An RNA of 177 nucleotides, treated with 2A3 and DMS and read out base by base. Reactivities are given for positions 27 through 126. For 2A3, 1,612 sequencing reads were counted.

RNA sequence: GGGAACGACUCGAGUAGAGUCGAAAAGCAGGUGCAGCCACAGGUACAGCCACAGGCACAUUCACAGGGCCCAAGGCAGGUGCAGCUGCAGCAGGAGGCAGAGCCGCUGAAGCAGGUGCAGCCACAGCGUCCUGUCAGUGUUCGCACUGACAGGACGAAAAGAAACAACAACAACAAC
Reactivity to 2A3 in 0.01 (KOAc 150mM, MgCl2 10mM, bicine 150mM(pH8.5), 24C), signal-to-noise 2, nucleotides 027 to 126: g130c090a030g000g040u050g030c000a020g010c000c000a070c010a060g050g090u110a080c060a030g010c010c000a100c010a030g050g000c010a000c020a070u160u200c070a040c020a070g060g000g000c030c000c010a040a050g010g000c050a030g080g030u040g000c020a040g000c020u030g010c000a000g010c020a020g000g060a130g010g050c120a130g050a030g120c040c010g020c010u030g030a060a000g000c000a020g010g020u030g000c010a030g090c010c000a040c060a020g110
Reactivity to DMS in 0.01 (KOAc 150mM, MgCl2 10mM, bicine 150mM(pH8.5), 24C), signal-to-noise 1, nucleotides 027 to 126: g170c050a120g000g010u000g000c000a040g020c000c010a160c080a110g030g040u000a000c190a050g010c000c060a080c240a190g000g030c010a020c060a040u040u000c190a080c090a190g000g070g000c010c040c040a160a180g030g000c060a050g020g000u000g000c000a070g000c000u030g090c000a000g030c000a160g000g000a130g000g000c090a110g040a130g010c000c020g000c000u010g000a140a110g000c030a020g000g000u000g020c010a000g000c090c060a070c230a160g000